[RMDB]
RNA sequence: GGGAACGACUCGAGUAGAGUCGAAAAGAGUUGGGGGAGACCGAAGCGAGGAGGAAAGUAAAGAAAGCAACGGGGCUAGCCGUCAGGUGUUCCUCCCCCCGAGAGGGGAAGAGUGAGGCUUAUCCCGCAUUCACUUAUAGUUCGCUAUAAGUGAAUGAAAAGAAACAACAACAACAAC
Reactivity to 2A3 in 0.01 (KOAc 150mM, MgCl2 10mM, bicine 150mM(pH8.5), 24C), signal-to-noise 3, nucleotides 027 to 126: g060a010g030u140u100g020g000g020g010g020a050g010a000c000c030g050a040a000g050c030g020a030g000g010a000g030g020a070a040a030g070u130a070a080a080g060a070a080a010g030c030a020a030c030g000g000g040g010c020u030a020g040c020c010g050u030c020a010g000g100u040g060u080u020c000c010u000c010c000c010c000c000c010g070a060g040a050g040g000g000g010a030a010g020a010g050u090g020a020g000g000c000u030u040a050u050c020c000c000g010
Reactivity to DMS in 0.01 (KOAc 150mM, MgCl2 10mM, bicine 150mM(pH8.5), 24C), signal-to-noise 6, nucleotides 027 to 126: g000a110g010u000u010g010g000g010g010g010a100g010a080c080c040g000a100a120g000c070g010a080g010g020a050g000g000a050a040a090g010u000a060a100a120g000a070a070a080g010c110a080a110c070g020g000g000g010c130u000a080g000c030c010g010u000c110a050g010g010u010g010u000u000c020c010u000c010c020c000c000c010c020g010a130g000a140g010g010g010g000a040a050g000a060g010u000g000a160g000g000c060u000u010a120u000c000c000c000g000